[RMDB]
RNA sequence: GGGAACGACUCGAGUAGAGUCGAAAAGACCUAUGCGUAAUCGCGUCUUGACGUGAGUGGGAUAGCCUAGACUGUAGGCUAUCCCAAGUGUGCAUAGCGCACAAUACGCAUAGGUGAUCUACAGUCAGCGAUGAUCUAGGUUCGCCUAGAUCAUCGCAAAAGAAACAACAACAACAAC
Reactivity to DMS in 0.01 (KOAc 150mM, MgCl2 10mM, bicine 150mM(pH8.5), 24C), signal-to-noise 1, nucleotides 027 to 126: g000a000c000c000u000a010u000g000c000g000u000a010a130u000c020g010c000g030u000c060u010u000g040a030c000g050u000g020a050g050u000g000g000g010a000u000a010g010c000c010u000a060g000a030c020u010g000u000a020g010g010c000u000a010u000c000c000c000a000a010g000u000g000u000g000c010a170u000a180g000c240g010c000a000c010a120a170u020a000c010g010c000a010u000a050g000g000u000g000a050u010c120u000a010c020a010g000u000c010a220
Reactivity to 2A3 in 0.01 (KOAc 150mM, MgCl2 10mM, bicine 150mM(pH8.5), 24C), signal-to-noise 1, nucleotides 027 to 126: g060a000c010c000u010a020u020g020c020g010u050a120a060u060c000g000c000g020u030c080u170u190g110a010c000g010u000g000a050g010u000g000g000g000a000u010a010g000c000c010u020a100g010a060c010u010g040u030a010g010g000c040u000a000u010c000c000c000a000a010g000u010g000u030g000c070a120u210a300g090c050g000c010a000c010a000a030u020a010c000g040c000a010u000a000g000g000u000g020a070u010c040u050a040c000a020g010u000c020a020
The data come from the RNA Mapping Database (RMDB), library OK2TRN. An RNA of 177 nucleotides, treated with DMS and 2A3 and read out base by base. The RNA was probed in 150 mM KOAc, 10 mM MgCl2 and 150 mM bicine (pH 8.5) at 24 C. High DMS reactivity at an A or C suggests that its Watson-Crick edge is free. For DMS, 1,645 sequencing reads were counted. For 2A3 the reverse transcriptase was SuperScript II with manganese.